The record gives the reactivity of an RNA of 177 nucleotides to 2A3 and DMS.
The reactions ran in a buffer of 150 mM KOAc, 10 mM MgCl2 and 150 mM bicine (pH 8.5), at 24 C.
For DMS the reverse transcriptase was MarathonRT.
The 2A3 profile rests on 40,079 reads.
RNA sequence: GGGAACGACUCGAGUAGAGUCGAAAACAUGCAGGCGUCUGGUGCUAGGCGUACAGCACCAGGGUCAGCACUGCGUGCUGAGGCGUCGCAAGCGGCGCUGUCACGCCCGGCGAUUGGCUUACACGACCCAUCAGGCGAUCUUCGGGUUGCCUGGUGGAAAAGAAACAACAACAACAAC
Reactivity to 2A3 in 0.01 (KOAc 150mM, MgCl2 10mM, bicine 150mM(pH8.5), 24C), signal-to-noise 9, nucleotides 027 to 126: c010a000u030g000c010a000g020g000c000g010u010c000u000g000g000u010g000c010u020a050g070g030c050g110u140a050c030a020g000c000a000c000c000a000g010g000g030u110c010a010g010c030a050c020u020g010c010g000u000g000c030u050g020a030g000g020c000g000u000c000g000c040a090a060g060c050g010g000c000g000c010u020g100u030c020a010c020g000c000c000c000g010g010c020g050a080u050u190g100g000c010u030u050a040c050a010c080g130a130c010
Reactivity to DMS in 0.01 (KOAc 150mM, MgCl2 10mM, bicine 150mM(pH8.5), 24C), signal-to-noise 9, nucleotides 027 to 126: c040a050u020g000c010a040g000g000c000g000u010c000u000g000g010u000g000c000u000a130g010g000c130g010u020a070c090a020g000c000a010c000c000a010g000g010g010u050c010a070g000c010a090c060u010g010c030g020u000g000c140u010g010a160g000g010c000g010u000c000g000c080a090a160g020c100g000g000c000g000c030u010g000u020c090a110c090g000c000c000c020g000g010c040g000a050u010u010g010g010c040u010u010a070c080a080c090g000a150c190